[RMDB]
RNA sequence: GGGAACGACUCGAGUAGAGUCGAAAAGAAGGCGGGUAGGGGGGACCCCAGGGUCAACCUACGGAAAUCCCUGAGUUCCUCGGAUGUCCAGGCCGUCCCCUCUUCUAGAGAAGGGAGACUCCGGAACCACGGUUCACGUUCGCGUGAACCAAAAGAAACAACAACAACAAC
Reactivity to 2A3 in 0.01 (KOAc 150mM, MgCl2 10mM, bicine 150mM(pH8.5), 24C), signal-to-noise 5, nucleotides 027 to 129: g050a030a000g030g010c050g000g010g030u040a030g010g000g000g000g010g000a010c000c000c010c020a070g020g020g040u090c030a030a060c000c010u080a060c100g010g010a030a050a050u110c010c000c010u040g050a090g050u020u020c010c000u010c020g010g010a060u060g010u020c030c030a020g030g030c040c040g010u000c010c010c000c000u040c000u050u030c020u080a060g020a000g020a100a060g020g000g000a030g010a030c000u010c000c000g010g010a030a020c030c000a040c090
Reactivity to DMS in 0.01 (KOAc 150mM, MgCl2 10mM, bicine 150mM(pH8.5), 24C), signal-to-noise 5, nucleotides 027 to 129: g010a060a080g020g030c050g050g040g030u060a080g000g010g000g000g000g000a020c020c080c020c020a100g000g000g000u030c040a020a040c020c030u040a090c130g000g000a100a120a060u000c010c020c020u090g020a170g090u050u010c020c020u020c240g000g020a080u050g020u000c000c030a000g040g030c100c110g010u020c020c000c010c030u020c000u000u000c000u000a100g000a040g020a010a000g060g010g000a060g000a110c030u020c020c000g000g000a060a060c070c050a000c120